[RMDB]
RNA sequence: GGGAACGACUCGAGUAGAGUCGAAAAGCAGGCCGGUGUGCGUGACCUAAACAUCGUAGCCGGUCCUGGCGUUACCAUCAACCGUUUGCAGAACACCACCAUGCAGCUCUACGGCGAGAAUGGCGUGGAACCUUCGCCUUUUCGAAGGCGAAGGUUCAAAAGAAACAACAACAACAAC
Reactivity to DMS in 0.01 (KOAc 150mM, MgCl2 10mM, bicine 150mM(pH8.5), 24C), signal-to-noise 1, nucleotides 027 to 126: g020c000a050g000g010c020c000g010g020u000g000u000g000c040g000u020g000a140c180c170u040a110a110a120c150a070u150c010g030u020a300g000c000c000g000g000u040c020c020u000g000g000c010g000u010u000a090c010c020a110u020c030a060a150c120c070g000u000u000u010g000c040a030g000a200a090c070a090c030c080a070c000c060a020u030g000c100a090g070c120u010c000u000a020c010g000g000c030g000a030g000a070a060u000g000g030c160g010u000g000
Reactivity to 2A3 in 0.01 (KOAc 150mM, MgCl2 10mM, bicine 150mM(pH8.5), 24C), signal-to-noise 1, nucleotides 027 to 126: g060c020a010g010g000c000c010g100g000u090g090u110g080c010g020u050g000a070c000c240u180a070a250a000c030a040u210c010g050u040a030g000c000c000g010g050u090c000c010u000g000g040c030g010u000u070a090c010c000a040u060c030a010a040c020c000g090u060u100u100g050c030a010g000a000a020c000a010c020c010a070c020c010a030u060g020c010a060g010c000u120c030u020a070c050g080g030c020g020a070g010a110a080u160g030g030c020g000u050g030
An RNA of 177 nucleotides, treated with DMS and 2A3 and read out base by base. For DMS, 606 sequencing reads were counted. The RNA was probed in 150 mM KOAc, 10 mM MgCl2 and 150 mM bicine (pH 8.5) at 24 C. In probing experiments dimethyl sulfate is read out at A N1 and C N3, which are open when not base-paired. Source: RMDB library OK2TST, as collected in RNAgym. 2A3 adducts were read by reverse transcription with SuperScript II with manganese. For 2A3, 888 sequencing reads were counted.